[RMDB]
RNA sequence: GGGAACGACUCGAGUAGAGUCGAAAACAGCUUUCGAGCUGGUGGGCACCUUUGUGGAGAGGAGGAAUGGAACUACUCCUGAUCCGACCCAUUGGGUCGGGUUUGGGAGCCAUUCCGCGAAACUCUCCACUCUGGUCGGGGCAGUCUUCGGACUGAAUACCUAUUUUAUAUUCGUAUAAAAUAGGUAAAAAGAAACAACAACAACAAC
Reactivity to DMS in 0.01 (KOAc 150mM, MgCl2 10mM, bicine 150mM(pH8.5), 24C), signal-to-noise 1, nucleotides 027 to 156: c020a020g020c020u000u000u000c200g000a050g060c000u010g010g020u000g000g010g060c080a040c000c010u000u000u000g030u000g010g000a040g010a040g020g010a120g020g010a170a040u010g010g000a070a040c040u010a220c000u000c000c000u000g000a000u000c000c000g000a050c010c000c020a280u010u000g050g010g030u000c000g020g020g000u000u000u000g080g000g010a020g010c000c020a300u000u000c000c000g020c020g000a210a100a090c000u000c000u000c000c000a010c010u000c020u000g020g000u000c080g000g000g000g020c010a030g000u000c000u000u000c260g040g010a090c000u000g000a120a210
Reactivity to 2A3 in 0.01 (KOAc 150mM, MgCl2 10mM, bicine 150mM(pH8.5), 24C), signal-to-noise 2, nucleotides 027 to 156: c000a000g020c010u100u110u290c300g100a010g000c010u000g010g080u090g040g060g000c090a020c030c000u000u020u010g000u000g010g000a000g000a000g060g030a050g010g000a000a000u000g000g000a030a000c040u090a040c000u270c000c000u010g000a000u050c000c000g000a000c000c020c120a300u130u300g020g000g000u010c010g000g000g000u040u070u200g000g000g000a000g010c000c000a000u000u000c000c000g030c010g040a010a010a000c000u000c000u000c000c000a000c000u000c000u000g000g000u010c040g000g000g000g010c010a010g030u020c010u080u200c300g130g000a000c000u010g030a020a060